[RMDB]
RNA sequence: GGGAACGACUCGAGUAGAGUCGAAAAACAAGUGAACUUGCGAAUAAUAAUCCGCCGACGAAACCGCCACCAGGUGUAUAAUGUCCUGCUAAGAAAAGUGAAAAACCAAAGACCAUUACCAUGAAAACCAUGCAAUAAUGUUCGCAUUAUUGCAUGGAAAAGAAACAACAACAACAAC
Reactivity to DMS in 0.01 (KOAc 150mM, MgCl2 10mM, bicine 150mM(pH8.5), 24C), signal-to-noise 3, nucleotides 027 to 126: a120c070a090a070g020u000g030a080a020c050u010u010g010c040g010a090a030u040a100a080u040a120a160u010c030c020g000c040c030g010a070c090g010a120a040a050c100c000g000c030c000a020c070c020a040g040g020u020g000u030a040u030a050a070u020g000u010c000c030u010g000c060u020a050a100g000a030a040a080a050g020u030g000a020a070a000a070a060c020c030a020a080a040g000a100c040c020a020u000u050a060c030c020a020u030g010a090a110a120a030
Reactivity to 2A3 in 0.01 (KOAc 150mM, MgCl2 10mM, bicine 150mM(pH8.5), 24C), signal-to-noise 4, nucleotides 027 to 126: a000c030a030a040g070u070g060a010a110c020u050u110g020c050g100a110a070u110a150a040u050a050a060u060c010c080g000c010c020g060a080c020g010a120a010a030c000c010g010c010c010a010c010c000a030g090g000u020g030u050a060u050a120a090u080g020u020c000c000u020g040c030u030a080a010g070a050a110a030a010g050u080g100a160a050a000a000a010c030c030a070a030a040g040a010c000c020a010u040u070a070c070c060a080u080g110a020a060a000a030

Chemical mapping of a 177-nucleotide RNA with DMS and 2A3. The DMS profile rests on 3,986 reads. For 2A3 the reverse transcriptase was SuperScript II with manganese. The data come from the RNA Mapping Database (RMDB), library OK1LIB.